[RMDB]
RNA sequence: GGGAACGACUCGAGUAGAGUCGAAAAGAUGAGUGGCCUCGCAUGUGAAUGUGAGGUACAUGACGUUGACUCUACGUUAUGUAUGGUGUAUGUCAACAUACACCACCACUCAUGGUAGAGUCAAUAAGGUAGUGCAUGAUUUCGAUCAUGCGCUACCAAAAGAAACAACAACAACAAC
Reactivity to DMS in 0.01 (KOAc 150mM, MgCl2 10mM, bicine 150mM(pH8.5), 24C), signal-to-noise 5, nucleotides 027 to 126: g010a010u010g000a000g020u000g010g000c010c000u000c000g000c000a000u010g000u090g000a150a010u000g010u000g000a010g000g020u000a000c000a000u000g010a010c000g010u010u010g010a010c000u000c000u000a060c000g010u000u000a000u010g010u010a000u000g000g010u000g020u000a000u000g000u070c300a160a210c010a000u000a000c000a010c000c010a000c000c000a010c000u000c000a000u000g010g010u000a010g010a000g010u000c000a180a090u040a090a130
Reactivity to 2A3 in 0.01 (KOAc 150mM, MgCl2 10mM, bicine 150mM(pH8.5), 24C), signal-to-noise 9, nucleotides 027 to 126: g070a000u000g000a000g000u000g000g000c000c000u000c000g010c000a010u040g100u130g280a300a010u000g010u000g000a010g000g000u000a000c000a000u000g000a000c010g000u020u140g000a000c000u000c000u010a000c000g000u010u010a000u000g000u000a000u000g000g010u000g010u010a000u000g120u120c100a070a060c000a200u000a000c000a000c000c000a000c000c000a000c000u000c000a000u000g000g010u030a000g000a000g000u000c010a000a060u170a070a010

Structure probing data (DMS and 2A3) for a 177-nucleotide construct. For 2A3, 45,070 sequencing reads were counted. For DMS, 27,978 sequencing reads were counted. Conditions: 150 mM KOAc, 10 mM MgCl2 and 150 mM bicine (pH 8.5), 24 C. 2A3 adducts were read by reverse transcription with SuperScript II with manganese. Reactivities are given for positions 27 through 126.